[RMDB]
The record gives the reactivity of an RNA of 177 nucleotides to DMS and 2A3. 2A3 adducts were read by reverse transcription with SuperScript II with manganese. For DMS the reverse transcriptase was MarathonRT. For DMS, 4,235 sequencing reads were counted. The 2A3 profile rests on 3,411 reads. The RNA was probed in 150 mM KOAc, 10 mM MgCl2 and 150 mM bicine (pH 8.5) at 24 C.
RNA sequence: GGGAACGACUCGAGUAGAGUCGAAAAAGUGUGCGGGCCGGAGUUCGGACCCGAGGACUGCGUGCGCGCACCGGCAGCGAUCAGGGCGUCCAGCACGAGGGUGGCGUCCUUCUGGAACUGGGCGAGCCAUCAGGUGCACAUUCGUGUGCACCUGAUGAAAAGAAACAACAACAACAAC
Reactivity to DMS in 0.01 (KOAc 150mM, MgCl2 10mM, bicine 150mM(pH8.5), 24C), signal-to-noise 2, nucleotides 027 to 126: a070g010u030g000u010g000c000g010g010g020c000c000g010g000a050g000u010u000c000g000g000a180c010c000c010g000a100g000g010a030c000u010g000c000g010u030g010c010g020c030g030c010a020c010c010g000g000c050a060g000c060g000a080u050c040a100g000g010g000c010g000u000c020c010a050g000c110a170c190g010a050g000g000g010u010g030g010c130g020u000c010c020u050u000c030u020g000g040a110a180c080u020g000g000g000c020g000a150g040c100
Reactivity to 2A3 in 0.01 (KOAc 150mM, MgCl2 10mM, bicine 150mM(pH8.5), 24C), signal-to-noise 5, nucleotides 027 to 126: a000g250u220g000u010g010c000g040g150g000c000c010g010g040a020g000u010u030c020g030g080a120c030c020c010g000a030g000g020a000c020u110g110c060g060u260g010c110g020c000g010c050a010c010c000g040g000c020a060g020c020g030a070u130c050a060g000g100g010c020g040u040c010c020a020g040c040a020c080g040a070g030g030g030u050g050g030c030g010u100c040c000u070u030c030u060g040g020a060a060c010u010g000g020g020c020g010a020g060c020